[RMDB]
RNA sequence: GGGAACGACUCGAGUAGAGUCGAAAACAGACAGAUUACCAGCAACAGUGACCGGAUUGCAUACAUUCACCUGCAACCUGCCGACUGAUUUCCAGCUGAAUAUAUGGGAUGGAGCAAGCGUGCAAUCUGAAUCUCGCUAUGUGCUUAGCACUGAAAAAAGUGCCUAAUCAUUCGUGAUUAGGCACUUAAAAGAAACAACAACAACAAC
Reactivity to 2A3 in 0.01 (KOAc 150mM, MgCl2 10mM, bicine 150mM(pH8.5), 24C), signal-to-noise 1, nucleotides 027 to 156: c030a010g180a010c020a030g060a020u110u110a110c060c030a020g010c020a030a040c000a050g020u000g030a040c100c030g010g000a070u000u030g010c000a010u060a110c010a080u050u160c060a070c030c010u030g010c020a040a070c000c000u040g070c020c020g080a080c060u070g050a150u090u040u070c060c000a020g010c030u100g030a130a020u160a010u020a050u190g050g010g020a020u070g040g000a030g080c030a100a000g040c070g060u000g000c000a000a040u010c020u050g060a050a030u060c050u020c040g000c060u050a050u150g050u030g010c010u030u010a050g000c030a010c040u040g000a090a030a000a080
Reactivity to DMS in 0.01 (KOAc 150mM, MgCl2 10mM, bicine 150mM(pH8.5), 24C), signal-to-noise 2, nucleotides 027 to 156: c060a140g020a210c030a050g010a120u000u000a100c030c030a150g000c010a070a100c030a040g030u000g020a080c030c070g030g020a070u010u000g020c050a090u000a090c060a160u000u000c060a100c030c030u000g000c030a070a080c050c010u010g040c050c070g000a050c040u000g020a160u000u000u000c090c000a120g000c040u000g020a180a140u000a100u010a050u010g000g040g030a080u000g000g010a110g010c090a040a100g000c000g000u010g000c040a020a050u000c050u000g010a020a080u000c020u000c010g020c060u000a110u010g000u020g010c010u000u000a090g020c020a050c030u000g000a000a080a070a090